[RMDB]
RNA sequence: GGGAACGACUCGAGUAGAGUCGAAAAGUGCUCGACAAGAUGCGGCUGAUCGACAUCUCCAACAACCUCGGCGACGCCAAAUCGCUUGUCACCCACCCCGCCACCACGACGCACCGGGCGAUGGGCCGGGCGGGCUGCAGUUCGCUGCAGCCCGCCCAAAAGAAACAACAACAACAAC
Reactivity to 2A3 in 0.01 (KOAc 150mM, MgCl2 10mM, bicine 150mM(pH8.5), 24C), signal-to-noise 1, nucleotides 027 to 126: g080u080g000c110u140c090g030a020c050a100a000g000a210u140g020c020g000g080c050u040g110a230u010c000g050a070c000a160u030c050u040c000c030a040a070c060a120a070c000c010u050c040g000g020c000g050a090c050g080c030c020a000a000a130u220c150g000c000u050u130g070u090c130a020c000c000c000a010c000c000c000c000g000c000c000a050c060c000a080c060g050a000c020g060c060a050c000c020g050g000g000c000g110a110u110g140g000g000c000c030
An RNA of 177 nucleotides, treated with 2A3 and read out base by base. For 2A3, 408 sequencing reads were counted. The reactions ran in a buffer of 150 mM KOAc, 10 mM MgCl2 and 150 mM bicine (pH 8.5), at 24 C.